About this RNA: The record gives the reactivity of an RNA of 177 nucleotides to 2A3 and DMS. DMS adducts were read by reverse transcription with MarathonRT. For DMS, 1,272 sequencing reads were counted. Values cover nucleotides 27 to 126. DMS (dimethyl sulfate) methylates the pairing face of unpaired adenines and cytosines. Conditions: 150 mM KOAc, 10 mM MgCl2 and 150 mM bicine (pH 8.5), 24 C.
[RMDB]
RNA sequence: GGGAACGACUCGAGUAGAGUCGAAAAUUAGAGGUCUCGAUCACAGCGAGACCGGGAGAGACGCUCCCGGGCCGGGUUAGGUACCGGUGCGGCGGGUGGUAUAGGAGCCGGCCGGACCCGGGGAUAAGGUACUUGUUUAGUUCGCUAAACAAGUACCAAAAGAAACAACAACAACAAC
Reactivity to 2A3 in 0.01 (KOAc 150mM, MgCl2 10mM, bicine 150mM(pH8.5), 24C), signal-to-noise 1, nucleotides 027 to 126: u180u070a030g000a080g100g010u000c010u010c000g050a140u300c120a040c080a160g100c010g010a010g030a010c020c010g010g000g000a080g000a020g010a000c020g070c090u030c000c000c020g020g030g010c000c020g010g010g000u100u130a060g080g040u080a120c020c010g000g020u160g120c020g020g000c090g020g050g030u140g090g020u050a130u110a300g000g000a030g000c000c000g080g020c000c020g000g000a100c000c000c040g020g040g010g000a060u090a110a020
Reactivity to DMS in 0.01 (KOAc 150mM, MgCl2 10mM, bicine 150mM(pH8.5), 24C), signal-to-noise 2, nucleotides 027 to 126: u000u000a210g000a150g020g020u000c000u000c000g000a070u010c240a080c290a120g000c000g000a010g000a020c000c000g000g010g000a140g020a160g000a120c180g010c080u010c030c000c000g020g000g020c020c020g000g020g000u030u030a060g010g010u010a110c030c000g000g020u000g000c050g000g010c040g010g000g030u000g010g000u000a060u000a110g000g030a300g020c010c010g000g000c000c010g010g000a080c000c010c010g020g000g010g020a080u010a040a110